[RMDB]
Source: RMDB library OK1LIB, as collected in RNAgym. This 177-nucleotide RNA was probed chemically with DMS and 2A3. The reactions ran in a buffer of 150 mM KOAc, 10 mM MgCl2 and 150 mM bicine (pH 8.5), at 24 C. Values are in units of 0.01, from 0 to 300, in steps of 10. 2A3 adducts were read by reverse transcription with SuperScript II with manganese.
RNA sequence: GGGAACGACUCGAGUAGAGUCGAAAACGCGCGAACGUAAAUUAUAUUGCGCGAAGCACGUGCGGAAAGGGCCCGAAACGCACGUGCGAAAUAACGCGCAAUACGGGCCCUAAUUUACGGAAGCGCGGCGGUUUUAAAAGUUCGCUUUUAAAACCGCAAAAGAAACAACAACAACAAC
Reactivity to DMS in 0.01 (KOAc 150mM, MgCl2 10mM, bicine 150mM(pH8.5), 24C), signal-to-noise 1, nucleotides 027 to 126: c000g060c000g020c000g000a300a260c010g020u000a000a000a020u000u000a000u010a000u000u000g000c020g000c070g040a080a160g000c000a000c000g020u000g000c020g000g030a020a090a040g000g020g050c020c000c000g000a040a020a300c020g000c030a000c000g040u030g020c000g020a050a040a030u000a070a090c090g040c000g000c000a030a050u000a040c010g000g000g090c000c000c000u000a000a000u000u000u000a010c030g000g000a120a300g020c000g020c000g000
Reactivity to 2A3 in 0.01 (KOAc 150mM, MgCl2 10mM, bicine 150mM(pH8.5), 24C), signal-to-noise 1, nucleotides 027 to 126: c000g010c000g030c010g060a240a010c000g020u000a000a020a010u040u040a050u050a090u160u150g000c020g020c010g010a020a000g000c010a000c000g010u000g000c000g000g010a110a030a040g040g010g000c000c000c000g020a150a220a000c010g000c000a000c000g010u000g000c000g010a000a000a000u160a120a080c070g000c000g000c050a010a010u030a060c000g020g000g000c000c000c000u000a010a010u000u000u010a000c010g010g020a080a050g000c000g000c000g000